An RNA of 177 nucleotides, treated with DMS and 2A3 and read out base by base. The RNA was probed in 150 mM KOAc, 10 mM MgCl2 and 150 mM bicine (pH 8.5) at 24 C. For DMS the reverse transcriptase was MarathonRT. Values are in units of 0.01, from 0 to 300, in steps of 10. 2A3 adducts were read by reverse transcription with SuperScript II with manganese.
RNA sequence: GGGAACGACUCGAGUAGAGUCGAAAAGCGCUGAGCUAGCAUGGUACAUACAUGAGCGAUAGUAUACUAGGAUCUGCGCGAUCCACAGACCAUGCUAGCAUCAUGUCAUGAGAUGCUAGCAUAGGUAAUAAUCUUAAGGCUUCGGCCUUAAGAUUAUAAAAGAAACAACAACAACAAC
Reactivity to DMS in 0.01 (KOAc 150mM, MgCl2 10mM, bicine 150mM(pH8.5), 24C), signal-to-noise 5, nucleotides 027 to 126: g010c020g010c010u000g000a070g010c010u000a010g010c100a050u010g010g010u000a050c160a080u010a080c090a100u010g000a140g010c120g000a100u000a070g020u000a040u000a100c020u010a020g000g000a090u000c000u000g010c030g010c040g010a080u010c010c010a080c240a100g010a050c010c010a030u000g000c000u000a000g000c000a010u000c000a070u000g020u010c270a090u010g000a050g010a010u000g000c000u000a000g000c000a010u000a030g010g010u000a060
Reactivity to 2A3 in 0.01 (KOAc 150mM, MgCl2 10mM, bicine 150mM(pH8.5), 24C), signal-to-noise 4, nucleotides 027 to 126: g010c000g000c020u030g010a010g020c000u000a010g000c030a050u100g080g090u140a110c040a070u160a030c030a030u200g110a050g080c110g090a060u070a150g140u080a070u010a100c030u020a020g100g030a270u010c010u050g010c020g010c010g030a030u020c010c030a070c030a070g060a000c010c010a000u010g000c000u000a000g020c000a000u000c000a010u040g140u070c020a050u160g090a050g000a140u000g000c000u020a020g000c000a000u020a080g010g030u000a030